[RMDB]
RNA sequence: GGGAACGACUCGAGUAGAGUCGAAAAAGGCAGUAGCAAAGUGAGAAAGAUGGUGGCUAAAUCCUCAUUAGGGGGUGAUGCCUAUGCUUGAAUGUAUAGUUUUACUCCUGGAAAGGAGCUAGACUUGAAUAAGCACUACUUUCGAGUAGUGCUUAUUAAAAGAAACAACAACAACAAC
Reactivity to DMS in 0.01 (KOAc 150mM, MgCl2 10mM, bicine 150mM(pH8.5), 24C), signal-to-noise 9, nucleotides 027 to 126: a070g010g010c040a050g020u010a070g010c050a040a070a110g010u010g000a090g000a110a080a060g010a070u010g010g020u000g010g000c020u010a130a150a100u010c010c000u000c020a180u030u030a140g010g000g000g000g000u000g000a120u030g000c050c010u000a030u020g000c040u000u020g010a110a080u010g010u010a050u010a030g010u000u000u010u000a130c000u000c000c000u000g010g050a100a120a030g000g000a010g010c100u000a030g000a040c020u000u010g000
Reactivity to 2A3 in 0.01 (KOAc 150mM, MgCl2 10mM, bicine 150mM(pH8.5), 24C), signal-to-noise 8, nucleotides 027 to 126: a010g060g010c030a030g050u110a030g020c040a030a060a030g050u080g060a080g090a090a050a000g070a060u090g040g110u050g010g000c000u010a040a030a050u120c000c000u020c020a110u110u300a140g000g000g020g000g050u030g000a020u080g000c010c000u020a030u060g020c020u070u100g070a120a040u100g060u060a030u050a090g000u010u000u020u070a010c000u000c000c000u010g050g080a070a080a030g010g000a000g000c020u030a020g000a020c000u010u030g000
This 177-nucleotide RNA was probed chemically with DMS and 2A3. DMS adducts were read by reverse transcription with MarathonRT. Reactivities are given for positions 27 through 126. Conditions: 150 mM KOAc, 10 mM MgCl2 and 150 mM bicine (pH 8.5), 24 C. The data come from the RNA Mapping Database (RMDB), libraries RFM100 and RFMREP.